[RMDB]
RNA sequence: GGGAACGACUCGAGUAGAGUCGAAAAGUGAAAGCUCCUUCUCUCGCAAUGUGUAACUCAUGAUUCUCAUGACCCCUGGUUGGAGAGAUCCGGACUAGGAGCCAGGGGGCGUCUGAUUCUGCCAGCCAAAACUGUCGUAAGUUCGCUUACGACAGAAGAUUACCCAAUGAUUCGUCAUUGGGUAAUCAAAAGAAACAACAACAACAAC
Reactivity to 2A3 in 0.01 (KOAc 150mM, MgCl2 10mM, bicine 150mM(pH8.5), 24C), signal-to-noise 6, nucleotides 027 to 156: g080u060g050a140a050a030g020c010u020c000c020u070u020c020u000c010u020c020g030c080a080a150u100g050u030g020u140a070a050c030u020c060a020u050g060a150u200u040c070u020c050a030u080g060a100c000c000c000c010u020g010g030u030u090g100g010a060g000a020g010a090u020c040c040g070g070a090c070u080a070g030g020a000g010c010c000a010g010g000g000g020g000c010g030u010c050u050g040a080u090u000c000u050g060c020c010a020g010c030c030a050a090a090a120c020u000g000u000c000g000u000a000a000g000u020u090c170g000c150u000u000a000c000g000a000c000a000g000a000a000
Reactivity to DMS in 0.01 (KOAc 150mM, MgCl2 10mM, bicine 150mM(pH8.5), 24C), signal-to-noise 2, nucleotides 027 to 156: g000u000g010a080a150a180g010c010u000c020c010u000u010c020u000c020u020c030g000c090a100a080u000g030u010g010u000a090a080c070u000c000a080u000g000a060u000u000c050u010c010a090u010g040a090c000c000c000c000u000g020g030u000u000g020g000a060g000a210g010a110u010c020c050g030g030a120c080u000a090g010g010a090g010c010c030a040g010g010g010g000g000c040g020u000c050u010g040a100u010u000c040u010g020c000c020a090g000c050c030a050a040a080a110c000u000g050u000c010g010u000a000a020g040u010u020c300g040c000u000u000a000c000g030a010c000a000g010a030a080